[RMDB]
RNA sequence: GGGAACGACUCGAGUAGAGUCGAAAAUGAAUGCCAAUGAAGAGUAACAAGAGUUGAGGCAACUGCUAGCGUUCAGGUAACCCCUUUACGUGAUGCAUUUGUCCACUCUUGCACAGAAUGGAAUCAUAUCCAUCAAGAUCUUCGGAUCUUGAUGGAUAAAAGAAACAACAACAACAAC
Reactivity to DMS in 0.01 (KOAc 150mM, MgCl2 10mM, bicine 150mM(pH8.5), 24C), signal-to-noise 3, nucleotides 027 to 126: u000g000a050a050u010g000c010c000a060a080u010g020a160a090g010a110g000u060a280a160c030a000a000g010a020g010u010u020g010a190g020g020c000a020a000c040u000g000c000u000a300g010c000g000u010u020c020a000g000g010u050a290a180c230c230c020c000u000u000u000a000c010g010u000g020a110u020g000c000a000u000u010u000g000u000c000c010a020c000u000c010u000u000g000c170a030c030a100g020a100a090u000g000g010a100a050u010c040a050u010
Reactivity to 2A3 in 0.01 (KOAc 150mM, MgCl2 10mM, bicine 150mM(pH8.5), 24C), signal-to-noise 5, nucleotides 027 to 126: u110g010a020a020u150g040c050c050a050a030u230g090a070a110g040a020g140u160a110a030c010a000a010g010a010g000u090u090g040a110g140g000c000a010a000c020u000g000c000u000a010g020c010g010u020u000c010a000g010g030u070a090a090c000c000c030c000u020u000u010a000c010g000u020g030a060u280g000c000a010u010u000u000g000u000c000c000a000c000u000c000u000u020g020c010a010c010a020g190a100a070u080g000g020a010a030u090c020a010u020